[RMDB]
RNA sequence: GGGAACGACUCGAGUAGAGUCGAAAAAAGGAGUUCAUCGCCGGGUCGCGUUUGACCUUUAACAUACCUCGUACAGCUCCAUCAGGUACUGUCACAAUUCAUACCUGGGAGUAUAAUACAGGCUAUGGGCCUGCAUGAUAUUCGUAUCAUGCAGGCCAAAAGAAACAACAACAACAAC
Reactivity to DMS in 0.01 (KOAc 150mM, MgCl2 10mM, bicine 150mM(pH8.5), 24C), signal-to-noise 2, nucleotides 027 to 126: a060a000g010g000a050g020u020u000c140a070u000c010g000c040c040g050g000g000u000c020g000c210g000u010u020u010g010a120c100c090u000u000u070a040a300c000a040u000a030c010c040u000c010g000u000a020c220a140g000c000u000c000c010a060u050c060a010g030g000u000a000c200u000g000u050c030a220c240a020a030u010u040c090a070u000a000c000c000u070g000g020g000a000g000u000a070u010a100a300u000a010c000a030g000g120c300u040a000u000g000
Reactivity to 2A3 in 0.01 (KOAc 150mM, MgCl2 10mM, bicine 150mM(pH8.5), 24C), signal-to-noise 3, nucleotides 027 to 126: a000a000g100g030a100g030u040u060c070a080u040c050g010c000c000g130g000g030u120c040g000c030g100u050u070u140g030a040c000c000u010u100u100a050a000c010a000u070a000c000c000u000c090g010u030a020c020a110g060c000u030c000c000a110u280c020a010g070g000u000a020c150u090g070u150c070a060c040a190a300u280u270c010a040u030a010c020c000u000g010g000g000a020g000u000a070u050a110a010u020a000c000a010g000g110c090u090a050u090g010
Annotation: Structure probing data (DMS and 2A3) for a 177-nucleotide construct. It was measured as part of the RMDB library OK1LIB. For 2A3 the reverse transcriptase was SuperScript II with manganese.